[RMDB]
RNA sequence: GGGAACGACUCGAGUAGAGUCGAAAAGUGACUCGCAGGUGGAGACACGCUGUACACCGGGAAUGCAUCGAACUCGCGUUUAAGCGGUCUGUAAGGCCGUCGGCGUCCUGGGGAAGGGUCACGGAAGUAAUGCAGUGGCGUUCGCGCCACUGCAUUAAAAAGAAACAACAACAACAAC
Reactivity to DMS in 0.01 (KOAc 150mM, MgCl2 10mM, bicine 150mM(pH8.5), 24C), signal-to-noise 3, nucleotides 027 to 126: g000u000g010a010c010u000c000g010c020a010g040g000u000g010g010a160g000a260c010a010c000g020c000u010g000u030a150c050a070c000c000g000g020g010a020a030u010g030c020a300u090c010g000a000a060c030u020c270g000c300g040u000u000u010a000a090g000c000g000g000u020c000u000g000u000a050a000g000g000c000c000g000u000c010g020g010c020g000u000c020c000u000g000g000g000g010a120a160g010g020g000u000c000a000c000g000g000a130a150g020
Reactivity to 2A3 in 0.01 (KOAc 150mM, MgCl2 10mM, bicine 150mM(pH8.5), 24C), signal-to-noise 2, nucleotides 027 to 126: g000u000g000a000c000u010c030g050c030a020g000g000u040g000g000a060g010a010c000a000c030g300c030u030g010u020a000c020a020c000c000g000g000g010a110a180u050g000c080a050u060c090g000a010a000c020u010c170g110c080g000u060u020u000a040a000g000c000g000g000u010c020u060g300u230a030a010g000g010c010c000g020u020c000g050g000c000g020u010c000c000u000g020g000g000g030a090a090g030g000g000u000c000a000c000g000g050a030a000g020
The record gives the reactivity of an RNA of 177 nucleotides to DMS and 2A3. 2A3 adducts were read by reverse transcription with SuperScript II with manganese. For DMS, 4,909 sequencing reads were counted. It was measured as part of the RMDB library RFM100. For 2A3, 957 sequencing reads were counted. The reactions ran in a buffer of 150 mM KOAc, 10 mM MgCl2 and 150 mM bicine (pH 8.5), at 24 C.